This 177-nucleotide RNA was probed chemically with 2A3 and DMS. The RNA was probed in 150 mM KOAc, 10 mM MgCl2 and 150 mM bicine (pH 8.5) at 24 C.
RNA sequence: GGGAACGACUCGAGUAGAGUCGAAAAGAACUGAAAGGAUUGUAUGAAUCCAUAUAUAAUGCGAAAUGGAGUUAUGUAAUGUCGGGUUAUCGUAGAGAACCACUUGGAAUGAAAGUGUUCGAUGGAAGCUAGUAAUGCUUUUCGAAGCAUUACUAGCAAAAGAAACAACAACAACAAC
Reactivity to 2A3 in 0.01 (KOAc 150mM, MgCl2 10mM, bicine 150mM(pH8.5), 24C), signal-to-noise 3, nucleotides 027 to 126: g030a030a010c050u100g070a110a100a110g040g060a090u050u040g130u250a090u150g110a080a000u000c000c000a000u000a000u000a000u050a070a170u130g100c120g120a150a130a040u130g080g000a010g110u110u040a020u050g040u090a100a010u070g040u090c080g000g030g030u040u040a110u040c080g000u060a080g000a010g020a100a030c050c020a030c020u020u040g090g160a090a120u170g070a120a080a190g000u050g010u070u030c030g000a000u040g060g040a130a070
Reactivity to DMS in 0.01 (KOAc 150mM, MgCl2 10mM, bicine 150mM(pH8.5), 24C), signal-to-noise 4, nucleotides 027 to 126: g000a170a120c070u000g010a070a090a100g000g000a060u000u020g010u000a030u020g000a060a070u010c020c010a050u010a080u020a060u020a100a040u010g020c130g030a060a110a040u010g000g010a090g000u000u000a070u010g000u000a070a040u020g000u000c060g000g000g000u020u010a040u010c050g030u010a050g000a160g000a030a060c070c030a030c050u000u010g000g030a100a050u010g000a040a040a040g020u010g000u000u000c040g000a140u030g000g020a110a110